[RMDB]
RNA sequence: GGGAACGACUCGAGUAGAGUCGAAAAAUUAUCGUUUAUGUGGCGAUUUCGCAGUGGGGUUACAUCAUUACGACGCGUAUUGCGUCGCAUGCGGAUGCGGGUGCGCCGAAUAUUUAUCAGCAGCAUUGGCUGUUGUUGCAGGUGCCAUAUGGCAUUAACGCAUUUUAUAGUUCGCUAUAAAAUGCGUAAAAGAAACAACAACAACAAC
Reactivity to DMS in 0.01 (KOAc 150mM, MgCl2 10mM, bicine 150mM(pH8.5), 24C), signal-to-noise 2, nucleotides 027 to 156: a110u020u000a040u000c020g010u000u010u000a060u010g040u020g020g020c030g010a150u000u000u000c070g010c070a100g020u000g010g080g050g050u000u010a070c030a060u000c040a100u000u000a020c010g000a030c010g030c010g020u020a130u000u010g030c000g010u000c000g040c000a010u000g020c110g040g000a050u000g010c040g040g020g030u000g010c050g040c020c010g010a070a070u000a080u000u000u020a100u020c040a020g030c010a030g010c000a120u000u010g040g030c010u000g030u000u000g020u010u000g000c020a090g040g040u000g000c010c010a170u000a110u000g040g000c010a040u000u010a090
Reactivity to 2A3 in 0.01 (KOAc 150mM, MgCl2 10mM, bicine 150mM(pH8.5), 24C), signal-to-noise 3, nucleotides 027 to 156: a000u230u170a120u110c060g000u030u110u120a250u190g060u140g040g000c050g050a060u070u060u150c110g030c060a030g040u070g020g000g030g010u050u030a040c010a070u130c000a020u140u120a050c050g000a000c010g030c020g080u180a200u160u300g000c000g000u000c000g020c000a000u100g050c000g000g050a040u060g000c040g020g000g040u070g030c060g000c050c010g010a040a010u080a100u040u230u050a110u170c020a010g000c000a000g030c010a020u050u110g060g000c070u030g000u000u020g000u020u030g020c060a030g010g020u000g010c020c000a190u190a150u300g010g000c000a000u010u040a020